[RMDB]
RNA sequence: GGGAACGACUCGAGUAGAGUCGAAAAGAACACCUCGUACAAGAGGACGAAGGACCUGUCAACGGCGGGGGUAACUAUGACCCUCUUAAGGUAGCGUAGUACCUUGCCGCAUCAGUAGCGGCUUGCAUGAAUGGAUUAACCAGAGCUUCACUGUCCCGUCUUUACAUACGUUCGCGUAUGUAAAGACAAAAGAAACAACAACAACAAC
Reactivity to 2A3 in 0.01 (KOAc 150mM, MgCl2 10mM, bicine 150mM(pH8.5), 24C), signal-to-noise 6, nucleotides 027 to 156: g040a060a020c020a040c030c010u010c020g070u130a100c070a170a050g010a020g050g030a010c040g020a040a050g050g020a040c000c010u050g030u110c070a090a030c060g000g000c010g010g000g000g020g020u050a070a030c030u030a040u180g110a200c000c000c000u040c000u100u180a090a030g010g000u020a020g040c050g020u020a010g010u010a030c000c000u010u090g020c000c010g010c020a060u090c050a080g070u100a010g020c020g000g030c020u020u060g020c050a060u080g050a120a040u080g010g060a070u130u140a040a060c030c020a020g020a010g070c010u050u040c020a030c090u050g030u030c000c010c010
Reactivity to DMS in 0.01 (KOAc 150mM, MgCl2 10mM, bicine 150mM(pH8.5), 24C), signal-to-noise 2, nucleotides 027 to 156: g000a080a110c040a120c020c010u000c030g030u040a070c130a130a170g010a090g030g020a050c050g010a060a110g020g020a080c080c010u000g000u010c040a130a050c050g030g000c070g030g000g010g030g020u000a060a030c020u000a040u000g010a080c010c020c010u010c180u000u010a070a070g020g010u000a010g010c040g030u000a030g020u000a080c020c000u000u000g000c030c000g020c000a100u010c060a110g000u000a170g020c040g000g010c000u010u000g010c030a080u010g010a080a070u000g000g000a190u010u010a080a100c050c010a090g010a110g010c010u000u010c040a070c080u000g010u020c020c000c010